[RMDB]
RNA sequence: GGGAACGACUCGAGUAGAGUCGAAAAACUUGGCAAUAUAGCAGCAACUAUCUCGCAUCCCAUUAUCCUGGACAGACUGUACCUGGUAGGACUUGUUGACUACCGGCAAGUUCCUCAGCUUGCGAACCCAAACUUUGUGGUUCGCCACAAAGUUUGGAAAAGAAACAACAACAACAAC
Reactivity to 2A3 in 0.01 (KOAc 150mM, MgCl2 10mM, bicine 150mM(pH8.5), 24C), signal-to-noise 2, nucleotides 027 to 126: a010c050u080u080g050g000c060a060a030u090a020u010a290g020c040a010g030c030a020a070c050u040a040u080c030u000c030g050c010a050u050c000c000c010a020u090u090a060u010c010c010u020g010g030a030c020a030g060a070c020u070g000u060a080c020c020u080g010g020u040a010g000g010a040c030u120u110g030u080u020g060a050c030u060a050c010c000g030g010c010a000a020g020u090u040c020c000u050c020a020g000c010u030u050g020c010g030a020a030c000
Reactivity to DMS in 0.01 (KOAc 150mM, MgCl2 10mM, bicine 150mM(pH8.5), 24C), signal-to-noise 3, nucleotides 027 to 126: a110c080u000u010g010g000c030a070a060u010a100u010a060g010c050a050g010c070a060a080c100u010a040u010c040u000c060g010c080a120u000c020c030c020a100u000u010a070u000c020c020u020g010g000a070c070a070g000a060c070u010g000u000a080c110c070u020g010g010u000a030g010g000a080c080u010u010g010u000u000g010a120c050u000a030c060c020g000g000c030a010a030g010u000u000c000c030u010c090a130g000c060u000u010g000c020g010a050a050c150